Chemical mapping of a 207-nucleotide RNA with DMS and 2A3. For 2A3, 1,281 sequencing reads were counted. For DMS, 1,933 sequencing reads were counted.

RNA sequence: GGGAACGACUCGAGUAGAGUCGAAAAAAGGACAUUUACUUUAACGCCGAGGCCGAAUACCUGAGUAGUACCAUGGACACGACCGACGUGCGCGAUACGUUUGACGUGACGGAUCGAUAUCUCCGCAUCCGCGUGACGAGUGCGGCAACUGCGGGUGACUGGUGACGUAGUUCGCUACGUCACCAGUAAAAGAAACAACAACAACAAC
Reactivity to DMS in 0.01 (KOAc 150mM, MgCl2 10mM, bicine 150mM(pH8.5), 24C), signal-to-noise 1, nucleotides 027 to 156: a080a060g000g010a150c090a100u010u000u000a050c090u010u000u000a100a060c030g000c010c030g010a160g010g010c040c010g000a130a230u000a020c060c020u000g010a110g010u000a100g040u010a150c050c020a170u000g030g030a120c060a110c010g000a100c020c010g000a100c040g040u000g010c040g070c040g030a140u040a020c050g000u000u000u000g020a090c100g030u000g020a110c000g010g000a050u000c040g020a050u010a110u000c090u000c010c040g010c010a040u000c000c010g050c020g010u000g000a220c110g010a140g000u000g060c010g050g010c060a050a060c110u000g000c010g020g000g010u000g000
Reactivity to 2A3 in 0.01 (KOAc 150mM, MgCl2 10mM, bicine 150mM(pH8.5), 24C), signal-to-noise 3, nucleotides 027 to 156: a000a000g130g010a030c040a080u120u080u070a050c110u090u150u030a190a070c070g030c020c010g010a020g020g000c050c040g100a130a050u120a210c020c060u090g040a000g040u050a000g030u000a090c010c040a070u080g020g040a020c040a040c090g060a030c020c010g080a100c020g080u110g020c090g000c010g060a040u030a090c010g010u000u030u150g130a050c060g010u110g010a020c020g020g010a060u060c030g030a020u020a020u110c100u010c050c000g020c010a110u270c050c010g000c020g000u000g010a040c050g020a080g090u080g010c010g000g000c070a120a050c010u010g010c100g020g000g020u070g020